[RMDB]
RNA sequence: GGGAACGACUCGAGUAGAGUCGAAAAGCCAGGUUCAACUCACUCCUGGCGCAUGCAGUGAGUUGAAGCAUGCACGGUAUUAGGUACGGUGGACAUGCGAAAGCAUGUCCAUCGUACUUAAUACCGAGCACCUAGAACGGUUCGCCGUUCUAGGUGCAAAAGAAACAACAACAACAAC
Reactivity to DMS in 0.01 (KOAc 150mM, MgCl2 10mM, bicine 150mM(pH8.5), 24C), signal-to-noise 1, nucleotides 027 to 126: g040c010c030a120g000g000u000u000c030a050a060c030u020c030a020c030u000c080c070u000g030g030c100g030c090a030u000g020c180a020g000u010g000a030g000u000u000g020a050a030g010c090a110u010g020c070a240c010g020g010u000a000u000u000a000g000g020u000a000c010g020g010u000g010g000a010c030a000u000g000c000g000a100a160a180g000c000a000u000g000u000c000c000a000u000c000g020u000a000c000u000u000a000a000u000a000c000c010g000a050